Source information:
Source: RMDB library M2RFPK, as collected in RNAgym. Chemical mapping of a 207-nucleotide RNA with 2A3.

RNA sequence: GGGAACGACUCGAGUAGAGUCGAAAAAACAAACAUCAAAUCGCAUAGCAAAGAGUCAAAAAAAUAGAGAGCUUUGCGAGACCUACCAAGGGUGAAGAGAUACCAUCCAAGGAGCUGAAGAGAGAUCGAGAGCUCACGGCGUUCGCGCCGUGAGCAACAAGUAACAGAGCUUCGGCUCUGUUACUUGAAAAGAAACAACAACAACAAC
Reactivity to 2A3 in 0.01 (KOAc 150mM, MgCl2 10mM, bicine 150mM(pH8.5), 24C), signal-to-noise 1, nucleotides 027 to 156: a000a000c220a080a080a030c100a100u120c010a040a090a160u010c020g010c000a000u020a070g000c040a020a050a190g060a060g050u060c070a140a170a130a130a060a100a020u300a070g080a010g000a020g090c030u050u000u000g010c000g000a020g000a000c000c000u010a060c000c000a030a010g000g010g020u060g020a040a000g120a010g000a030u090a090c020c010a000u020c010c010a050a050g060g000a010g000c060u090g030a150a010g010a010g010a000g000a080u140c030g040a040g020a010g130c010u010c040a000c000g000g020c000g020u030u080c180g000c020g000c070c150g000u000g000a000g000c000a000a000